This 177-nucleotide RNA was probed chemically with 2A3. For 2A3 the reverse transcriptase was SuperScript II with manganese. The data come from the RNA Mapping Database (RMDB), library OK1LIB.
[RMDB]
RNA sequence: GGGAACGACUCGAGUAGAGUCGAAAAUGUGACUUAUUAGCCAGAAGUUUAGGGUUGUAUAGUCAUUAUUCACAUAAUCCGAAAUUGCGUAAUUGUAGGAUUCCACAUCACAUUUACCGUUUAAGGAAGCUGCGACCAUAUUCGUAUGGUCGCAGCUAAAAGAAACAACAACAACAAC
Reactivity to 2A3 in 0.01 (KOAc 150mM, MgCl2 10mM, bicine 150mM(pH8.5), 24C), signal-to-noise 1, nucleotides 027 to 126: u030g000u000g000a010c000u000u070a000u090u090a100g000c000c000a240g180a300a080g270u010u150u190a190g000g150g000u000u000g300u050a000u080a000g010u000c020a040u130u290a010u000u040c070a080c000a130u110a040a160u090c000c000g000a090a000a000u300u070g080c070g000u000a000a000u000u070g000u000a070g000g280a000u090u000c000c030a090c000a160u000c000a000c050a150u000u000u000a100c120c040g000u000u000u110a040a070g030g000a040